[RMDB]
This 177-nucleotide RNA was probed chemically with 2A3. 2A3 is a SHAPE reagent: it acylates the 2'-hydroxyl of flexible nucleotides of all four kinds. For 2A3 the reverse transcriptase was SuperScript II with manganese. Reactivities are rounded to 0.1 and cut off at 0 and 3. The RNA was probed in 150 mM KOAc, 10 mM MgCl2 and 150 mM bicine (pH 8.5) at 24 C.

RNA sequence: GGGAACGACUCGAGUAGAGUCGAAAAUUAGACGGAUGACUUGGUGUGUGUCAUGCGAGACACCUUAUGAGAUUGGCGGAACACGUUGUGUUAAAACUCCAUACAAAUACCUUAUCAUCCAAAAUACGUGGCCUCAUUAGUUCGCUAAUGAGGCCACAAAAGAAACAACAACAACAAC
Reactivity to 2A3 in 0.01 (KOAc 150mM, MgCl2 10mM, bicine 150mM(pH8.5), 24C), signal-to-noise 2, nucleotides 027 to 126: u180u070a010g070a170c180g070g000a000u030g000a040c080u060u050g010g000u000g000u040g000u000g000u010c040a000u050g050c090g090a010g060a020c050a000c010c040u100u090a120u180g200a080g030a170u100u060g030g030c040g000g090a140a000c010a000c050g300u220u300g000u000g000u060u020a000a090a050a070c000u000c010c000a000u040a090c000a050a100a000u000a000c000c000u040u020a000u030c000a000u070c000c000a030a030a030a030u110a000c030